An RNA of 177 nucleotides, treated with 2A3 and DMS and read out base by base. For DMS, 3,757 sequencing reads were counted. For DMS the reverse transcriptase was MarathonRT. Conditions: 150 mM KOAc, 10 mM MgCl2 and 150 mM bicine (pH 8.5), 24 C.
RNA sequence: GGGAACGACUCGAGUAGAGUCGAAAAAAAGAUAUGGACGAUUCAGCUAUAGACAGCAGGGUGGAGGGAAUCGGAAACGAUUCCUCCCCACCCACCCUGCCGAAGCUUAUUUCGUCCUAAGUCAAAAGAUAUCUAAAAAGUUCGCUUUUUAGAUAUCAAAAGAAACAACAACAACAAC
Reactivity to 2A3 in 0.01 (KOAc 150mM, MgCl2 10mM, bicine 150mM(pH8.5), 24C), signal-to-noise 2, nucleotides 027 to 126: a010a000a050g020a010u020a010u050g000g010a000c000g000a000u010u050c050a000g000c010u040a080u300a300g010a020c010a010g010c000a000g000g030g000u000g000g000a010g000g000g000a010a000u000c000g000g000a010a000a000c000g000a000u010u000c000c010u000c000c010c010c000a000c000c010c000a000c000c000c000u000g000c000c000g010a010a000g000c000u090u080a080u170u300u050c000g010u000c000c000u000a010a000g000u000c000a000a040a040a080
Reactivity to DMS in 0.01 (KOAc 150mM, MgCl2 10mM, bicine 150mM(pH8.5), 24C), signal-to-noise 5, nucleotides 027 to 126: a090a070a110g000a010u000a040u000g000g000a020c020g000a000u000u000c300a030g010c020u000a300u010a210g010a020c300a120g000c020a010g020g010g000u000g000g000a080g000g010g000a000a000u000c000g000g000a010a010a020c000g010a020u000u000c010c000u000c050c000c010c020a300c040c000c000a000c000c010c000u000g010c000c000g000a010a020g020c010u000u010a120u000u000u000c010g020u000c000c000u010a000a070g000u010c020a100a080a120a160